[RMDB]
RNA sequence: GGGAACGACUCGAGUAGAGUCGAAAACACCGGCGGCAGCGGUUCGGGGUGCGCCCACAUCGGCACCGCACGCAUCGGCGCGUUCGGGAACCCGGACAGAUCGACGUCGCCGUCGAGUGGGUCACCGGCUUUAAAGUCCAUUCGUGGACUUUAAAGCAAAAGAAACAACAACAACAAC
Reactivity to DMS in 0.01 (KOAc 150mM, MgCl2 10mM, bicine 150mM(pH8.5), 24C), signal-to-noise 3, nucleotides 027 to 126: c030a050c030c030g000g000c010g000g010c010a070g030c030g000g020u000u000c030g010g000g010g020u000g030c220g010c020c010c060a120c220a090u020c150g010g030c050a180c040c040g020c070a040c100g000c060a140u010c140g010g020c100g010c090g010u000u000c020g000g000g010a100a130c060c010c000g010g000a020c020a100g000a060u010c080g010a300c030g010u010c070g030c020c060g010u000c000g000a050g020u000g000g020g010u010c080a100c020c020g010
Reactivity to 2A3 in 0.01 (KOAc 150mM, MgCl2 10mM, bicine 150mM(pH8.5), 24C), signal-to-noise 2, nucleotides 027 to 126: c010a010c010c000g030g000c020g000g000c010a020g020c030g080g010u020u010c020g000g000g020g070u140g090c060g010c010c120c020a110c030a140u180c040g000g020c020a010c030c020g000c010a020c020g010c010a070u170c070g230g030c070g010c020g060u020u030c000g010g000g090a100a130c000c010c000g010g010a010c010a010g070a150u180c080g090a090c010g050u080c040g000c000c000g000u010c000g000a060g000u030g020g030g000u030c040a030c200c020g020